This 207-nucleotide RNA was probed chemically with 2A3 and DMS. For 2A3 the reverse transcriptase was SuperScript II with manganese. The data come from the RNA Mapping Database (RMDB), library OK3TST. Conditions: 150 mM KOAc, 10 mM MgCl2 and 150 mM bicine (pH 8.5), 24 C. Reactivities are given for positions 27 through 156.

RNA sequence: GGGAACGACUCGAGUAGAGUCGAAAAUGUUAAUUAAUCAAAUGUUCUUUACCAGUAAUGAGCAACACAUGUUUCAAUUUGUAGAUUAUAUUAAACAUCAAUCUAAGGUAGUAGAACUAAAAUUGAAUUCUAAUUUUUUGGAUUGGGAGACAAGACAGAACUAGUUAGAGUUCGCUCUAACUAGUUCAAAAGAAACAACAACAACAAC
Reactivity to 2A3 in 0.01 (KOAc 150mM, MgCl2 10mM, bicine 150mM(pH8.5), 24C), signal-to-noise 3, nucleotides 027 to 156: u100g010u030u040a050a030u100u140a040a060u100c030a070a050a080u080g010u020u030c000u020u030u010a030c000c010a010g060u110a080a090u070g040a030g110c050a070a120c080a020c030a120u080g030u050u210u050c040a080a080u030u110u190g030u070a040g010a040u090u040a030u040a030u160u170a070a130a030c010a010u050c020a070a040u030c040u100a060a030g010g000u020a030g050u000a000g020a000a010c020u030a050a050a050a100u020u010g000a000a020u080u000c000u040a090a190u100u070u040u060u080u260g100g010a010u030u050g000g010g020a030g010a010c060a120a020g050a060c100a030
Reactivity to DMS in 0.01 (KOAc 150mM, MgCl2 10mM, bicine 150mM(pH8.5), 24C), signal-to-noise 2, nucleotides 027 to 156: u000g000u000u010a080a050u000u010a040a080u000c030a040a080a100u030g010u000u010c030u000u000u000a070c040c040a270g010u000a080a070u000g000a090g000c120a110a030c070a050c030a060u000g000u000u000u000c040a020a130u000u000u000g000u000a100g000a090u000u000a050u000a090u000u000a030a040a090c000a070u000c010a020a050u000c040u000a090a080g010g040u000a040g020u000a020g010a010a070c010u000a060a080a050a170u000u000g000a060a180u000u000c040u000a030a010u020u000u000u010u010u010g000g000a060u010u010g000g020g020a100g010a140c020a030a030g000a080c060a180